[RMDB]
RNA sequence: GGGAACGACUCGAGUAGAGUCGAAAAGAGUCUGUCGUGUACUCAGGGCUGACUCACUGUCAUAGCAUGGCCUUUGCAGUGUGCCUCAUGCUGGCUCAAGUUCAGAACAGCUUAUUUGCACAUAGGAACCCACAUAUUCAGGUUCAAGAAUCAAGGGUGAUCAAACGACAUUCGUGUCGUUUGAUCAAAAAGAAACAACAACAACAAC
Reactivity to DMS in 0.01 (KOAc 150mM, MgCl2 10mM, bicine 150mM(pH8.5), 24C), signal-to-noise 1, nucleotides 027 to 156: g020a090g040u000c030u010g030u000c100g000u010g060u010a130c090u000c060a130g010g010g000c010u010g060a030c000u000c030a060c090u000g030u000c070a050u000a060g040c040a150u020g030g050c030c010u000u000u000g000c080a080g050u000g020u030g010c000c100u030c140a050u020g000c060u000g000g000c040u000c030a080a040g010u000u000c130a120g010a080a080c040a060g000c010u000u000a150u000u010u000g020c050a040c000a050u010a090g000g000a090a030c030c020c040a160c140a130u000a190u000u000c090a070g010g000u030u000c010a070a090g030a070a120u000c060a070a040g000g020g050
Reactivity to 2A3 in 0.01 (KOAc 150mM, MgCl2 10mM, bicine 150mM(pH8.5), 24C), signal-to-noise 2, nucleotides 027 to 156: g040a010g010u000c030u020g050u050c040g090u020g040u100a070c050u060c130a070g040g000g000c010u000g030a040c000u010c030a030c030u070g080u150c050a080u090a110g030c070a110u140g130g000c000c000u010u050u100g050c080a070g030u000g020u040g040c020c000u070c030a020u100g020c020u040g020g040c000u020c080a070a120g010u120u110c070a040g030a080a060c000a020g000c000u090u130a110u100u170u200g020c010a030c010a010u090a020g000g130a000a010c020c020c010a060c010a020u150a090u100u090c040a000g010g000u010u050c020a060a040g020a050a040u110c060a060a080g040g020g000